[RMDB]
RNA sequence: GGGAACGACUCGAGUAGAGUCGAAAAGAGAGAGUGUCUGAUGAAGAGUAAGCAGGUAGUGGUGGAAAACUACUCAUUGCUAUUGACAUUGGUGGCUAUUCUCUUGCUUAUCAGUGCUGCUUACACGGCCUGGUUACGCAUUCGUGCGUAACCAGGCAAAAGAAACAACAACAACAAC
Reactivity to 2A3 in 0.01 (KOAc 150mM, MgCl2 10mM, bicine 150mM(pH8.5), 24C), signal-to-noise 2, nucleotides 027 to 126: g040a000g000a000g020a000g040u020g000u000c010u030g120a140u050g050a040a090g080a010g040u020a050a090g030c010a030g000g000u060a010g000u040g130g040u120g060g140a030a180a050a010c030u060a060c020u030c030a020u040u130g120c040u080a080u180u090g000a020c000a000u010u000g000g000u000g060g000c040u030a090u240u010c060u030c000u070u070g010c040u130u220a050u110c010a000g030u030g050c020u020g010c000u010u030a020c070a010c040g050
Reactivity to DMS in 0.01 (KOAc 150mM, MgCl2 10mM, bicine 150mM(pH8.5), 24C), signal-to-noise 2, nucleotides 027 to 126: g000a040g000a030g010a050g020u000g010u000c040u000g010a100u010g030a150a190g010a170g020u000a010a080g010c010a010g010g010u000a020g010u000g020g030u000g000g000a120a110a130a060c020u000a020c030u000c020a050u000u030g000c160u000a120u000u010g010a140c010a030u000u000g020g020u000g010g020c010u000a040u000u000c080u000c130u000u000g010c050u000u020a020u010c030a040g040u010g000c070u000g000c030u000u000a020c040a130c160g010